An RNA of 177 nucleotides, treated with DMS and 2A3 and read out base by base. The 2A3 profile rests on 1,343 reads. Values cover nucleotides 27 to 126. It was measured as part of the RMDB library OK2TRN. The RNA was probed in 150 mM KOAc, 10 mM MgCl2 and 150 mM bicine (pH 8.5) at 24 C.
RNA sequence: GGGAACGACUCGAGUAGAGUCGAAAAGCUAUUUUAUUGAAUACAGGAAUUUGAAUUAAAGGCUGCAUUCAUGAGACCAGGCUCUGAACCCUGUGGGGACGGCCUGGCUGCAUCUGUCACCUUGAGAACAGUAAGACUGGUUCGCCAGUCUUACUGUAAAAGAAACAACAACAACAAC
Reactivity to DMS in 0.01 (KOAc 150mM, MgCl2 10mM, bicine 150mM(pH8.5), 24C), signal-to-noise 3, nucleotides 027 to 126: g000c050u000a030u010u000u010u000a090u010u010g000a040a040u000a050c040a060g000g010a090a120u010u010u010g010a160a110u000u000a040a070a060g010g020c040u000g000c020a020u000u010c030a010u000g000a060g020a120c020c010a010g010g000c010u000c080u020g000a230a160c000c000c070u010g030u020g030g010g010g010a240c150g000g000c010c010u010g010g020c050u000g000c040a040u000c090u010g010u000c090a100c120c040u010u020g010a160g000a110
Reactivity to 2A3 in 0.01 (KOAc 150mM, MgCl2 10mM, bicine 150mM(pH8.5), 24C), signal-to-noise 2, nucleotides 027 to 126: g020c020u020a110u060u140u110u030a120u060u100g040a050a010u060a080c040a090g000g140a220a110u180u100u080g050a170a110u190u100a130a020a010g090g070c030u010g010c010a010u000u100c020a010u040g020a000g000a060c000c000a010g020g010c020u000c020u250g080a090a100c000c020c060u100g210u300g020g020g000g060a000c020g000g000c010c010u010g000g000c000u000g000c000a010u000c010u020g020u060c020a050c090c000u020u100g060a040g050a180